[RMDB]
RNA sequence: GGGAACGACUCGAGUAGAGUCGAAAAGAAAAAACUUUCGAGUUUUUUCGAUACUGCCGCACAACCUUCUGGUGUAGUGUUUGUCGCACAGCGAUGGCAUGCUCUAGACUGACUUCGGUCAGUCUAAACAGGAAGUACUUUUCGAAGUACUUCCUGUAAAAGAAACAACAACAACAAC
Reactivity to DMS in 0.01 (KOAc 150mM, MgCl2 10mM, bicine 150mM(pH8.5), 24C), signal-to-noise 3, nucleotides 027 to 126: g000a000a000a010a010a010a000c000u000u000u000c140g020a030g010u000u000u000u000u000u000c000g000a230u000a070c150u010g010c010c020g020c020a030c040a110a060c020c030u000u010c240u000g030g000u000g010u010a060g010u000g000u010u010u000g020u000c040g000c010a140c150a110g010c030g010a040u000g010g020c020a050u000g010c040u000c040u000a000g000a020c000u000g000a010c000u000u010c180g020g000u000c000a000g010u000c010u000a000a090
Reactivity to 2A3 in 0.01 (KOAc 150mM, MgCl2 10mM, bicine 150mM(pH8.5), 24C), signal-to-noise 4, nucleotides 027 to 126: g000a000a020a000a010a080a000c140u210u180u170c300g070a100g020u020u040u020u000u010u020c000g000a000u040a080c040u040g050c010c020g020c000a020c010a050a050c000c020u210u230c160u300g020g010u090g040u100a180g020u020g060u060u110u250g030u020c020g020c030a140c110a230g010c040g010a010u050g020g000c020a020u060g040c020u020c000u030a010g000a000c000u010g000a000c000u020u050c210g070g010u000c000a000g000u000c000u000a010a010